The record gives the reactivity of an RNA of 207 nucleotides to 2A3 and DMS. For DMS, 1,365 sequencing reads were counted. 2A3 adducts were read by reverse transcription with SuperScript II with manganese. Values are in units of 0.01, from 0 to 300, in steps of 10. The reactions ran in a buffer of 150 mM KOAc, 10 mM MgCl2 and 150 mM bicine (pH 8.5), at 24 C.
[RMDB]
RNA sequence: GGGAACGACUCGAGUAGAGUCGAAAACCUGGCCUUCCCGUGUAACCAGUUCGGGAAGCAGGAGCCAGGGAGUAACGAAGAGAUCAAAGAGUUCGCCGCGGGCUACAACGUCAAAUUCGAUAUGUUCAGCAAGAUCUGCGUGAACGGGGACGACGCCGGAAAAUGCAUUGUUCGCAAUGCAUUUUCCAAAAGAAACAACAACAACAAC
Reactivity to 2A3 in 0.01 (KOAc 150mM, MgCl2 10mM, bicine 150mM(pH8.5), 24C), signal-to-noise 2, nucleotides 027 to 156: c000c010u000g040g000c020c000u020u030c020c000c010g010u000g030u060a170a190c090c060a180g040u180u080c000g030g000g000a000a000g020c070a070g080g090a000g000c010c010a020g000g020g000a010g040u020a040a040c070g040a100a010g020a010g000a120u120c050a030a140a050g050a010g000u090u030c060g000c040c000g080c050g090g000g000c010u060a030c050a130a020c040g020u060c040a070a090a110u210u100c010g030a050u070a010u190g070u010u000c020a020g030c000a070a050g050a210u030c020u030g010c020g050u020g030a040a000c010g020g000g000g030a010c030g010a000c020g030c060c000
Reactivity to DMS in 0.01 (KOAc 150mM, MgCl2 10mM, bicine 150mM(pH8.5), 24C), signal-to-noise 1, nucleotides 027 to 156: c000c040u000g020g050c040c020u000u010c000c010c000g070u000g060u000a160a160c120c100a140g000u000u000c000g000g000g000a130a130g040c080a030g010g020a200g000c010c000a060g000g020g010a220g020u000a070a120c070g050a120a160g000a220g020a110u000c020a000a130a140g000a080g000u000u000c020g010c080c080g000c020g000g050g040c050u020a090c060a030a050c020g010u010c070a030a070a130u000u000c020g070a150u010a040u000g000u000u000c030a180g000c030a070a100g000a110u000c070u010g020c030g070u000g020a020a080c020g000g000g040g030a160c070g000a020c020g020c100c050